[RMDB]
RNA sequence: GGGAACGACUCGAGUAGAGUCGAAAAACUCGUUACGACGAGAACUGUGAGGGGAAUGAUGUACUACUACAGGGCUCUCAAGAUGCUUGCUUUUCUUGAUAAUGCAUCUGAAGUAGAAAUUACAGAAAGACGGAGUCCUUUUCGAAGGACUCCGUCUAAAAGAAACAACAACAACAAC
Reactivity to DMS in 0.01 (KOAc 150mM, MgCl2 10mM, bicine 150mM(pH8.5), 24C), signal-to-noise 1, nucleotides 027 to 126: a020c130u000c000g060u000u050a060c270g010a100c040g060a070g050a050a050c110u000g000u010g000a120g000g000g000g000a150a010u060g000a250u040g000u010a200c050u000a040c120u000a120c000a020g090g000g000c000u120c300u000c000a060a040g000a000u000g020c110u000u000g000c040u010u000u000u000c040u000u000g000a000u000a000a050u070g000c000a070u020c000u000g000a070a040g040u060a000g000a110a030a140u040u000a010c140a200g000a160a000
Reactivity to 2A3 in 0.01 (KOAc 150mM, MgCl2 10mM, bicine 150mM(pH8.5), 24C), signal-to-noise 1, nucleotides 027 to 126: a000c020u020c020g010u000u020a020c270g010a020c020g000a130g020a020a020c060u160g040u000g060a120g030g000g000g020a040a080u050g030a010u090g020u190a000c020u000a000c000u010a120c000a000g000g050g000c000u020c000u000c010a000a030g000a000u020g080c130u250u130g100c060u090u300u180u000c030u020u020g040a080u000a160a000u190g000c000a120u000c000u000g000a000a000g000u000a000g100a030a130a040u160u000a030c010a000g160a230a070